[RMDB]
RNA sequence: GGGAACGACUCGAGUAGAGUCGAAAAUCAAAGAGCGUACAGCACACUCUGACUGUACGACAGUCUGACACACACGUACGCUAGUCCAACGAGAGAGAGAGAGCGUUGGAACAAGUGUGUGAAAAAAACAUCCUGCGACGUUCGCGUCGCAGGAUGUAAAAGAAACAACAACAACAAC
Reactivity to 2A3 in 0.01 (KOAc 150mM, MgCl2 10mM, bicine 150mM(pH8.5), 24C), signal-to-noise 1, nucleotides 027 to 126: u080c070a080a100a060g130a040g000c010g000u000a000c000a020g020c040a030c030a020c120u150c010u050g000a210c000u020g030u020a030c010g020a000c000a000g120u000c010u030g070a020c000a010c000a000c000a000c030g050u190a000c000g050c110u070a010g030u000c010c000a000a010c000g010a050g000a010g000a000g010a000g000a010g010a090g010c020g000u000u000g010g000a020a020c010a030a040g020u010g020u010g020u060g000a050a000a030a000a000a000